[RMDB]
RNA sequence: GGGAACGACUCGAGUAGAGUCGAAAACCGGAGUAGUUCGCUACUCCGGAAAUAAAUUCUGCGGUAAUUCGACCGCAAAUAUUACCGCUGAUGCGGUCGAAAAAACUGCCAAGUUCGCUUGGCAGAAGACAUAAUUCAACUUCGGUUGAAUUAUGUCAAAAGAAACAACAACAACAAC
Reactivity to 2A3 in 0.01 (KOAc 150mM, MgCl2 10mM, bicine 150mM(pH8.5), 24C), signal-to-noise 3, nucleotides 027 to 126: c010c000g000g000a000g000u020a000g000u030u090c190g000c080u000a000c000u000c000c010g000g000a010a010a000u030a010a070a030u140u030c050u110g120c010g080g030u090a130a180u070u030c010g000a000c000c000g000c000a020a010a000u040a010u030u120a060c010c030g000c090u080g040a040u080g010c000g000g000u010c010g000a010a010a000a000a020a040c000u010g000c010c000a010a000g010u030u060c180g060c130u010u010g000g030c010a000g000a010a010
Reactivity to DMS in 0.01 (KOAc 150mM, MgCl2 10mM, bicine 150mM(pH8.5), 24C), signal-to-noise 3, nucleotides 027 to 126: c000c000g000g000a030g030u020a020g010u000u020c180g000c000u000a010c000u000c000c000g000g000a000a030a040u010a060a110a180u010u000c030u010g030c000g030g010u010a090a230u000u000c020g000a040c000c000g000c010a030a040a040u000a090u010u010a180c030c040g000c090u010g010a130u000g000c010g000g000u000c010g000a000a050a080a080a100a150c000u000g000c000c000a020a010g010u000u000c230g000c010u010u000g020g000c000a000g010a050a070

Structure probing data (2A3 and DMS) for a 177-nucleotide construct. For DMS, 2,501 sequencing reads were counted. The data come from the RNA Mapping Database (RMDB), library M2PK50. The RNA was probed in 150 mM KOAc, 10 mM MgCl2 and 150 mM bicine (pH 8.5) at 24 C. Values cover nucleotides 27 to 126.